Source: RMDB library M2PK90, as collected in RNAgym.
An RNA of 177 nucleotides, treated with DMS and 2A3 and read out base by base.
RNA sequence: GGGAACGACUCGAGUAGAGUCGAAAAACUUUUAGCGUUUGCAAGACGGUGUUCUUGCAAUGAUCUGGAUUUAGCGCACGGAGGUCCGAAAUCCAGAUCAACAUUUCGGACCUCCGCGCUAAUAAAAACAUACUUACACCUUCGGGUGUAAGUAUGUAAAAGAAACAACAACAACAAC
Reactivity to DMS in 0.01 (KOAc 150mM, MgCl2 10mM, bicine 150mM(pH8.5), 24C), signal-to-noise 3, nucleotides 027 to 126: a080c070u000u000u010u010a050g020c060g010u000u010u010g010c000a020a000g010a010c010g010g030u010g020u010u000c000u000u000g000c000a010a000u010g000a110u000c050u000g000g010a150u010u000u000a000g010c020g030c030a110c190g050g020a010g000g010u000c000c020g000a010a010a010u000c140c140a150g000a120u010c160a070a080c200a030u000u000u000c010g000g000a020c000c000u000c000c000g010c010g010c000u000a000a000u010a040a030a080a100
Reactivity to 2A3 in 0.01 (KOAc 150mM, MgCl2 10mM, bicine 150mM(pH8.5), 24C), signal-to-noise 2, nucleotides 027 to 126: a000c040u120u140u080u180a050g070c060g110u030u060u090g010c010a000a000g000a010c070g210g190u140g040u110u000c000u010u000g000c000a000a000u040g020a040u030c040u060g080g010a050u010u030u030a020g000c000g000c030a020c130g000g000a010g000g000u030c000c010g000a000a000a000u060c040c030a050g030a110u100c000a000a010c020a010u000u000u000c010g000g020a020c000c000u000c000c010g000c010g000c000u000a000a010u030a010a050a000a000
About this RNA:
The RNA was probed in 150 mM KOAc, 10 mM MgCl2 and 150 mM bicine (pH 8.5) at 24 C. For DMS the reverse transcriptase was MarathonRT.